[RMDB]
RNA sequence: GGGAACGACUCGAGUAGAGUCGAAAAAGACGGAAACCCAUCGACUGUCACCAGAUGCUGCAUCACCUGAUCACUGAUGUCUCAACGGUAUCCGGCGGUACAACUGAAUACUUGUAGCUGCCUUUUGAAAAGGAGUUCAUCUUCGGAUGAACUCCAAGCGUUAAAUCGUGUUCGCACGAUUUAACGCAAAAGAAACAACAACAACAAC
Reactivity to 2A3 in 0.01 (KOAc 150mM, MgCl2 10mM, bicine 150mM(pH8.5), 24C), signal-to-noise 1, nucleotides 027 to 156: a010g040a010c030g040g030a100a110a040c020c000c020a010u030c000g120a080c030u040g010u070c020a020c140c010a040g040a180u110g050c040u080g020c010a010u000c000a040c010c000u000g020a030u070c060a000c020u030g000a030u090g080u020c020u000c060a050a030c060g090g000u050a020u090c030c020g030g000c020g000g030u030a050c000a030a010c020u190g060a050a060u150a140c000u020u060g000u030a060g070c060u040g000c000c000u060u130u070u080g140a060a040a010a050g010g000a000g000u000u000c020a000u000c000u080u020c080g090g000a000u000g010a020a020c000u000c000c000a030a000